[RMDB]
RNA sequence: GGGAACGACUCGAGUAGAGUCGAAAACCAGGAGUCUGCGCCCUAGAGCGUCCCCAGCGCCGAGGGCCGGUGCCCGGCGUGCUAACCAUGCGUCUGCGGCCAAGGCCGAGCUCCGAGCGGCGUUAGCUAUCGAGCAACUCUUCGGAGUUGCUCGAUAAAAAGAAACAACAACAACAAC
Reactivity to 2A3 in 0.01 (KOAc 150mM, MgCl2 10mM, bicine 150mM(pH8.5), 24C), signal-to-noise 1, nucleotides 027 to 126: c010c000a010g030g000a010g010u020c010u060g020c020g030c070c000c010u070a040g000a000g000c000g000u060c000c000c000c030a000g000c000g020c000c000g020a100g010g010g040c040c030g010g040u180g000c000c000c030g010g000c040g020u040g010c000u040a100a000c010c000a000u070g010c020g100u030c020u120g080c180g020g000c060c040a070a030g090g000c000c000g010a070g050c050u010c060c030g020a050g050c070g000g000c000g000u010u030a030g010c010
Reactivity to DMS in 0.01 (KOAc 150mM, MgCl2 10mM, bicine 150mM(pH8.5), 24C), signal-to-noise 1, nucleotides 027 to 126: c000c030a300g000g000a000g020u000c020u010g000c300g000c020c050c030u100a090g010a040g000c070g000u000c000c000c000c000a150g000c010g020c000c040g000a050g050g010g010c020c000g000g010u010g000c010c000c080g000g000c020g020u000g000c010u000a120a100c300c150a260u040g010c030g060u010c000u010g000c110g010g030c130c060a180a140g020g070c000c000g010a070g010c060u000c000c000g000a060g000c000g000g000c090g030u020u000a130g020c080